[RMDB]
RNA sequence: GGGAACGACUCGAGUAGAGUCGAAAACUACUCUUAUAAUCCCUAACGUAGUUGGGAUUGACGUUUGUAAUCAGCGUCAUGAACCAGGAAUCCCUUGUAAAUGUGUGUCAACAACGCACGUUGAAUACGUCCCUGCCCUUUGUACACACCGCCCGUCCGUCAACUAGUAGUUCGCUACUAGUUGACGAAAAGAAACAACAACAACAAC
Reactivity to DMS in 0.01 (KOAc 150mM, MgCl2 10mM, bicine 150mM(pH8.5), 24C), signal-to-noise 2, nucleotides 027 to 156: c000u000a050c010u030c030u030u010a130u000a150a110u000c000c000c010u000a100a120c100g010u000a080g030u000u020g020g000g000a160u010u000g010a030c020g040u010u040u000g070u010a090a100u010c060a060g030c000g050u000c010a070u010g010a150a140c040c030a120g010g030a090a090u000c000c000c010u000u000g040u010a070a000a050u000g030u010g000u000g030u010c010a210a140c020a160a070c010g010c010a010c010g020u010u000g000a150a140u000a040c040g020u000c010c020c000u000g020c030c010c030u000u000u000g000u000a100c060a070c040a010c040c020g000c000c010c020g010u000c040
Reactivity to 2A3 in 0.01 (KOAc 150mM, MgCl2 10mM, bicine 150mM(pH8.5), 24C), signal-to-noise 5, nucleotides 027 to 156: c020u030a010c000u020c040u100u190a090u100a270a100u070c010c020c030u050a090a020c060g120u070a020g040u070u050g000g020g000a020u000u020g020a020c030g030u020u150u080g220u240a120a130u170c080a010g000c000g020u020c010a010u030g060a030a090c010c010a020g000g050a030a040u020c010c000c000u030u070g120u090a060a090a070u060g030u000g030u000g030u030c070a030a030c040a020a040c140g000c000a030c020g000u000u030g020a070a030u090a060c050g050u040c020c010c010u010g020c020c010c000u060u060u080g080u090a020c020a000c000a010c030c050g070c000c010c010g040u070c040